[RMDB]
RNA sequence: GGGAACGACUCGAGUAGAGUCGAAAAGAUAUGGAGCUAGUGGGAGUACUAAUCUCGGAAACGAGAUGUACGCGAAACCACAGGCUCCUAAGUCAAACAGAUCACUUCGUUCGCGAAGUGAUCUGAACUGCCUUACAGAGUUCGCUCUGUAAGGCAGAAAAGAAACAACAACAACAAC
Reactivity to DMS in 0.01 (KOAc 150mM, MgCl2 10mM, bicine 150mM(pH8.5), 24C), signal-to-noise 2, nucleotides 027 to 126: g000a030u000a060u010g000g000a010g000c000u000a190g040u020g020g020g020a090g040u010a030c010u030a120a070u000c000u000c000g000g010a040a030a080c040g030a010g020a000u000g010u000a000c000g040c160g000a120a070a170c000c000a000c010a300g000g000c000u000c010c000u000a000a050g000u000c000a060a120a300c000a000g010a000u000c000a000c000u000u000c000g000u000u020c300g000c000g000a000a010g000u010g000a000u000c000u000g000a060a080
Reactivity to 2A3 in 0.01 (KOAc 150mM, MgCl2 10mM, bicine 150mM(pH8.5), 24C), signal-to-noise 1, nucleotides 027 to 126: g030a000u040a030u080g010g000a000g000c020u140a070g080u010g000g030g050a170g020u010a000c000u160a090a270u020c010u020c010g020g000a020a000a010c000g000a000g000a030u010g020u010a000c030g040c070g140a300a040a010c000c010a020c020a040g070g010c010u000c010c000u000a030a000g010u010c030a010a100a060c010a000g000a010u000c000a000c000u020u010c020g020u090u090c290g000c020g150a000a000g000u000g000a000u010c000u010g010a000a010
The record gives the reactivity of an RNA of 177 nucleotides to DMS and 2A3. For 2A3, 2,406 sequencing reads were counted. For DMS the reverse transcriptase was MarathonRT. For DMS, 1,190 sequencing reads were counted.